[RMDB]
RNA sequence: GGGAACGACUCGAGUAGAGUCGAAAAGGUCGUCUUUUCGAAGACGACCACUGUCGUUCCCUAAACUUUUCGAAACAUGUCGAAAGACAUGCUGAAACAGAAUUGGUGUGUGUUUCGACACACACAACAAUACCAGUCCUUUCGAGGACUGGUAUUGAAAAGAAACAACAACAACAAC
Reactivity to 2A3 in 0.01 (KOAc 150mM, MgCl2 10mM, bicine 150mM(pH8.5), 24C), signal-to-noise 8, nucleotides 027 to 126: g010g000u010c000g000u010c010u020u060u040u110c230g120a000a000g000a000c000g000a000c000c000a000c010u020g010u000c000g000u000u000c000c000c000u000a000a020a020c010u050u050u020u020c040g030a050a060a050c000a010u010g000u000c010g030a070a020a030g010a010c000a000u000g000c030u060g070a060a040a020c090a070g170a200a160u180u220g110g000u010g000u000g000u000g000u020u050u110c220g030a010c000a000c000a000c010a000c000a010a010
Reactivity to DMS in 0.01 (KOAc 150mM, MgCl2 10mM, bicine 150mM(pH8.5), 24C), signal-to-noise 6, nucleotides 027 to 126: g010g010u000c000g010u000c000u000u000u000u010c160g010a030a020g000a010c010g000a000c000c010a010c080u010g010u000c010g010u000u000c000c010c010u010a030a080a150c070u000u000u000u000c020g010a170a100a120c020a000u000g010u000c000g000a140a110a140g010a010c000a000u000g000c050u000g010a080a050a070c220a080g010a080a110u000u010g000g010u000g010u000g010u000g000u000u000u000c180g010a050c000a010c000a010c010a000c000a080a120